[RMDB]
RNA sequence: GGGAACGACUCGAGUAGAGUCGAAAAAACACUAUUACAAUGUUCACUUCGAAACUUCCAUAACUAGUAAUAGGGAAGUAACAUUCGUGUAAAAGUGAGUACAACUUCAACAAAGCAACGAAGAUGAAAUUAGGCAGUAUUUCGAUACUGCCUAAUUAAAAGAAACAACAACAACAAC
Reactivity to 2A3 in 0.01 (KOAc 150mM, MgCl2 10mM, bicine 150mM(pH8.5), 24C), signal-to-noise 9, nucleotides 027 to 126: a000a000c160a060c070u130a120u160u090a030c030a040a050u040g030u030u030c070a030c030u030u040c060g100a130a100a070c020u070u050c050c040a140u090a250a150c100u060a080g130u150a130a160u050a130g050g050g000a000a000g000u010a010a010c010a040u060u110c110g030u070g020u080a060a060a000a010g020u020g050a020g100u080a040c030a090a030c060u030u040c020a030a060c030a150a220a050g160c040a060a040c100g040a020a020g030a040u160g100a070
Reactivity to DMS in 0.01 (KOAc 150mM, MgCl2 10mM, bicine 150mM(pH8.5), 24C), signal-to-noise 7, nucleotides 027 to 126: a050a070c040a050c020u000a060u020u010a020c040a060a050u010g010u010u000c130a050c070u010u010c050g010a090a120a080c090u010u020c070c040a150u040a080a300c110u020a060g010u060a080a090u010a050g000g000g020a000a000g000u000a030a050c060a040u020u020c150g000u020g010u010a020a030a050a060g010u000g000a090g010u010a080c140a070a070c030u000u000c050a070a080c190a080a050a090g000c180a060a070c070g000a020a030g000a120u020g000a080